[RMDB]
RNA sequence: GGGAACGACUCGAGUAGAGUCGAAAACUUAAGGGGUCUUCCUUCCAGGUCUCCGCCCGGGGGAAGGCGUCACGCAGCCCCAAAACUUAGCUCUGGUGGGCUGCGGCGCUGACUAAUAGCUCUUGGACUAGGCCAAUAUUUUCGAAUAUUGGCCUAGAAAAGAAACAACAACAACAAC
Reactivity to DMS in 0.01 (KOAc 150mM, MgCl2 10mM, bicine 150mM(pH8.5), 24C), signal-to-noise 3, nucleotides 027 to 126: c050u020u020a070a100g000g000g010g010u010c020u000u000c010c020u010u010c030c040a030g000g000u000c110u030c170c150g000c000c020c060g030g000g020g000g000a040a110g000g010c000g000u000c080a110c030g010c000a010g000c000c010c010c080a070a050a090a120c110u000u030a110g020c100u010c120u030g000g000u020g010g000g010c010u000g010c000g020g000c040g020c030u000g000a140c100u010a120a060u020a080g000c080u000c010u000u000g000g010a300
Reactivity to 2A3 in 0.01 (KOAc 150mM, MgCl2 10mM, bicine 150mM(pH8.5), 24C), signal-to-noise 7, nucleotides 027 to 126: c050u130u130a090a030g020g000g000g010u010c010u050u020c010c000u210u130c010c020a020g000g030u060c080u060c120c100g020c020c010c010g030g000g000g000g010a020a010g000g010c000g060u010c010a030c040g010c000a000g010c000c000c000c000a000a080a060a110c110u200u190a020g060c040u060c100u150g080g020u210g100g010g000c000u000g000c000g000g000c010g010c010u040g030a050c030u080a030a160u060a230g040c010u010c010u020u030g010g020a040
This 177-nucleotide RNA was probed chemically with DMS and 2A3.